[RMDB]
RNA sequence: GGGAACGACUCGAGUAGAGUCGAAAAGAUAUGGAAUUCACUCCCCACCACGCACAAACGUUGAAAUGACUGACUCGGAAACGAGUCAGUCAUGGAGUUUACGUGCGUGAGGUGAAUUCCUAAGUCAGAACAAGAUUAAGUUCGCUUAAUCUUGUUCAAAAGAAACAACAACAACAAC
Reactivity to DMS in 0.01 (KOAc 150mM, MgCl2 10mM, bicine 150mM(pH8.5), 24C), signal-to-noise 6, nucleotides 027 to 126: g010a100u020a180u010g010g000a010a020u000u000c000a010c000u000c120c030c020c040a300c070c010a010c010g000c000a010c020a040a040a030c010g010u000u020g020a190a150a010u000g000a020c000u000g010a020c000u000c000g000g010a090a070a100c000g010a020g000u000c000a010g020u000c000a000u000g000g010a060g010u000u000u010a100c300g010u000g010c010g010u000g000a030g030g010u000g000a000a010u000u000c000c000u000a020a100g010u010c150a110
Reactivity to 2A3 in 0.01 (KOAc 150mM, MgCl2 10mM, bicine 150mM(pH8.5), 24C), signal-to-noise 5, nucleotides 027 to 126: g040a060u250a200u300g000g000a000a010u000u010c000a010c030u190c060c060c000c010a020c000c010a000c000g000c010a000c010a020a030a000c050g300u300u180g080a060a050a000u000g010a000c000u000g000a010c000u000c010g010g030a040a080a070c010g000a010g010u010c000a000g000u000c000a010u000g010g000a010g000u010u020u140a170c160g010u000g000c000g010u010g000a000g010g000u000g000a000a000u000u000c000c000u010a070a010g190u160c150a070
Structure probing data (DMS and 2A3) for a 177-nucleotide construct. The 2A3 profile rests on 14,421 reads. Source: RMDB library TTRINS, as collected in RNAgym. The RNA was probed in 150 mM KOAc, 10 mM MgCl2 and 150 mM bicine (pH 8.5) at 24 C.